[RMDB]
Chemical mapping of a 177-nucleotide RNA with 2A3 and DMS.
High DMS reactivity at an A or C suggests that its Watson-Crick edge is free.
2A3 is a SHAPE reagent: it acylates the 2'-hydroxyl of flexible nucleotides of all four kinds.
Source: RMDB library TTRDES, as collected in RNAgym.
RNA sequence: GGGAACGACUCGAGUAGAGUCGAAAAGAUAUGGAGCGUUGUUAGUGGAGCCUGGAAUCGGAAACGAUUCUCAGGCGUUGAAACUAACAUCGCUCCUAAGUCAAACCUGCCCGUUCGCGGGCAGGAAGAUGUUGUAUAUGUUCGCAUAUACAACAUCAAAAGAAACAACAACAACAAC
Reactivity to 2A3 in 0.01 (KOAc 150mM, MgCl2 10mM, bicine 150mM(pH8.5), 24C), signal-to-noise 4, nucleotides 027 to 126: g010a020u060a030u170g000g000a000g000c010g000u000u000g010u000u010a020g010u030g140g040a030g000c000c000u010g000g010a010a010u010c000g010g030a070a040a040c010g010a010u030u040c290u140c050a000g000g000c010g000u020u020g000a010a010a000c000u000a000a010c000a000u000c000g010c000u000c000c000u000a000a000g000u010c010a010a010a070c000c000u000g000c000c010c010g030u060u060c300g000c030g120g000g030c000a000g000g000a000a030
Reactivity to DMS in 0.01 (KOAc 150mM, MgCl2 10mM, bicine 150mM(pH8.5), 24C), signal-to-noise 6, nucleotides 027 to 126: g010a030u000a300u010g000g000a010g030c000g000u000u000g000u000u000a000g010u000g000g010a100g020c000c000u000g000g000a010a000u000c000g000g000a140a090a190c010g010a010u000u000c010u020c010a000g000g010c000g010u000u010g000a210a150a030c000u010a000a010c000a000u000c000g010c000u000c000c000u000a000a060g010u000c020a130a140a210c000c000u000g000c000c010c000g020u000u010c240g020c010g010g000g010c000a000g000g000a030a050